[RMDB]
About this RNA:
This 207-nucleotide RNA was probed chemically with 2A3. The 2A3 profile rests on 1,113 reads. 2A3 adducts were read by reverse transcription with SuperScript II with manganese.
RNA sequence: GGGAACGACUCGAGUAGAGUCGAAAACAGGGAAAUCCUGAUCGGCGUAUCACGUGAUGGCGGCUCGAAGCUCGCGGACGCGAUGUCGACGGGCACGCAGUUCCAGCUCUAUCUCGCGCUUCGGCUGGCGGGCUAUGAGGAAUUCGCAGCCCUUCGCGUUAGCAGAGGUGUUCGCACCUCUGCUAACAAAAGAAACAACAACAACAAC
Reactivity to 2A3 in 0.01 (KOAc 150mM, MgCl2 10mM, bicine 150mM(pH8.5), 24C), signal-to-noise 2, nucleotides 027 to 156: c010a030g010g020g040a090a150a140u240c010c000u060g010a190u040c010g070g010c060g040u070a040u140c070a070c120g040u070g040a110u100g130g010c000g010g000c020u010c090g070a060a020g030c000u020c030g000c040g070g040a050c090g000c020g090a060u080g130u170c020g000a080c010g020g000g000c140a030c080g000c010a010g000u040u000c000c030a010g010c030u000c000u080a110u070c050u040c040g050c000g000c070u040u060c070g050g000c030u100g180g010c020g000g020g000c000u030a050u270g040a070g020g070a060a040u140u050c060g000c050a030g010c040c000c000u070u070c080g030c050